The record gives the reactivity of an RNA of 177 nucleotides to 2A3 and DMS. DMS adducts were read by reverse transcription with MarathonRT. The data come from the RNA Mapping Database (RMDB), library M2PK50. Reactivities are given for positions 27 through 126. The reactions ran in a buffer of 150 mM KOAc, 10 mM MgCl2 and 150 mM bicine (pH 8.5), at 24 C.

[RMDB]
RNA sequence: GGGAACGACUCGAGUAGAGUCGAAAAUCCUCUAUCUUCGGAUAGAGGAAAAGAGCUAGCUGGUACCGCUAGCAAAGAAAAGGUACCAAGACGGAAACGUCAAAACGAAGGGGUUCGCCCCUUCGAACCAACAAGAUUUCUUCGGAAAUCUUGUUGGAAAAGAAACAACAACAACAAC
Reactivity to 2A3 in 0.01 (KOAc 150mM, MgCl2 10mM, bicine 150mM(pH8.5), 24C), signal-to-noise 1, nucleotides 027 to 126: u010c010c010u000c000u000a000u000c000u010u030c110g050g000a000u000a010g000a010g000g000a050a040a010a020g080a020g000c000u000a000g000c040u070g000g000u010a000c010c000g000c010u010a000g020c050a020a010a000g040a010a050a000a030g000g000u000a000c010c010a000a060g000a000c000g000g060a050a050a020c000g000u010c030a010a100a000a000c000g000a000a000g050g020g000g000u060u100c230g110c010c000c000c000u000u000c000g000a000a010
Reactivity to DMS in 0.01 (KOAc 150mM, MgCl2 10mM, bicine 150mM(pH8.5), 24C), signal-to-noise 1, nucleotides 027 to 126: u000c000c000u020c000u010a000u000c010u000u030c160g020g000a000u000a000g010a020g010g000a000a010a020a070g000a220g000c000u000a000g000c000u000g000g000u010a010c000c010g000c000u000a020g030c000a030a100a100g000a030a050a020a070g000g030u010a010c010c000a210a090g000a010c000g000g000a120a070a210c040g020u010c010a060a020a070a180c010g020a000a020g030g010g000g010u010u030c260g000c000c000c010c000u000u010c010g010a050a140